[RMDB]
RNA sequence: GGGAACGACUCGAGUAGAGUCGAAAAUCCAAUGAGUUCAAGGGAAAGAGAAACCACAAAACCCCUCGUGAUCGUUUCUGAAAUCUCUCUAAAACGUAUUGGACAGGGUUUUGCCUUCUAAAAGUGCGAGCAUUGGCAUAUUCGUAUGCCAAUGCUCAAAAGAAACAACAACAACAAC
Reactivity to DMS in 0.01 (KOAc 150mM, MgCl2 10mM, bicine 150mM(pH8.5), 24C), signal-to-noise 2, nucleotides 027 to 126: u010c000c010a120a090u000g000a100g020u010u010c050a120a200g000g000g000a060a030a050g000a040g010a040a050a050c050c190a110c010a020a030a030a130c050c020c030c080u000c070g010u030g000a040u000c000g010u010u000u020c130u000g020a040a070a030u030c100u020c160u000c010u010a070a040a020a010c010g020u000a010u000u000g000g020a030c300a060g010g000g010u000u000u000u000g010c040c030u000u030c080u000a040a110a080a120g000u010g010c220